Background: This 177-nucleotide RNA was probed chemically with DMS and 2A3. The RNA was probed in 150 mM KOAc, 10 mM MgCl2 and 150 mM bicine (pH 8.5) at 24 C.
RNA sequence: GGGAACGACUCGAGUAGAGUCGAAAAAUCAGCCACACAUGCACACACCCGUUCCAUCAUGAACCACCUGUGAUAGGUAGGGAGAGGUUCCACUCUCGACCACAACAUGGUAAAGAGUUACCUUGCAUCAUAAGAGGCAGUUCGCUGCCUCUUAUGAAAAAGAAACAACAACAACAAC
Reactivity to DMS in 0.01 (KOAc 150mM, MgCl2 10mM, bicine 150mM(pH8.5), 24C), signal-to-noise 6, nucleotides 027 to 126: a080u020c060a100g010c010c000a040c050a060c070a050u010g010c030a060c050a080c070a070c040c020c020g010u000u010c010c020a070u010c110a090u000g010a090a110c040c030a040c020c020u000g000u000g000a130u010a030g010g010u000a040g020g010g000a050g010a020g010g000u000u000c050c080a130c020u000c010u000c170g010a050c020c000a070c090a070a090c070a300u010g000g000u010a020a050a080g010a080g010u000u000a030c040c010u000u010g010c140a140
Reactivity to 2A3 in 0.01 (KOAc 150mM, MgCl2 10mM, bicine 150mM(pH8.5), 24C), signal-to-noise 2, nucleotides 027 to 126: a000u050c030a010g070c000c010a040c000a010c000a040u080g020c030a020c000a000c010a020c070c000c010g040u070u040c020c000a120u090c020a050u160g040a060a040c000c010a010c020c000u080g010u030g160a110u190a150g000g100u010a080g040g020g020a040g010a010g000g010u080u080c050c010a060c010u030c010u010c020g080a030c000c020a010c000a160a000c020a060u120g010g010u030a020a050a010g060a030g010u030u070a060c010c000u050u050g010c030a070